[RMDB]
RNA sequence: GGGAACGACUCGAGUAGAGUCGAAAACCCACGACUUUCGAGUCGUGGGAAAUAUAAUCAGCGGUAAAUAAUUAGCUCCGCUUACCGCUCAAGCGGAGCAUACACGUCUAGGAUUCGUCCUAGACAACUAGUUACGAAUAUUCGUAUUCGUAACUAGAAAAGAAACAACAACAACAAC
Reactivity to 2A3 in 0.01 (KOAc 150mM, MgCl2 10mM, bicine 150mM(pH8.5), 24C), signal-to-noise 9, nucleotides 027 to 126: c010c000c000a000c000g000a000c000u060u100u190c200g120a010g010u000c000g000u010g000g000g010a010a080a000u190a010u040a040a160u090c040a010g030c020g070g100u090a060a110a080u120a070a210u200u180a050g010c000u000c000c000g000c010u000u030a070c020c030g040c050u040c080a010a000g010c000g010g000a000g000c000a000u020a010c050a000c060g010u000c000u000a000g010g000a010u040u040c160g040u030c040c000u000a000g000a000c000a000a010
Reactivity to DMS in 0.01 (KOAc 150mM, MgCl2 10mM, bicine 150mM(pH8.5), 24C), signal-to-noise 5, nucleotides 027 to 126: c010c000c000a020c010g010a020c000u000u000u010c140g010a010g020u000c000g030u000g010g010g010a000a020a040u000a090u020a090a080u010c080a050g010c030g010g010u010a070a070a110u010a080a100u010u000a120g020c010u000c000c000g010c010u000u000a080c030c030g000c040u000c100a040a020g020c000g010g000a010g020c010a040u000a030c260a080c170g000u000c000u000a010g010g000a030u000u010c200g010u000c000c000u000a000g010a000c010a050a090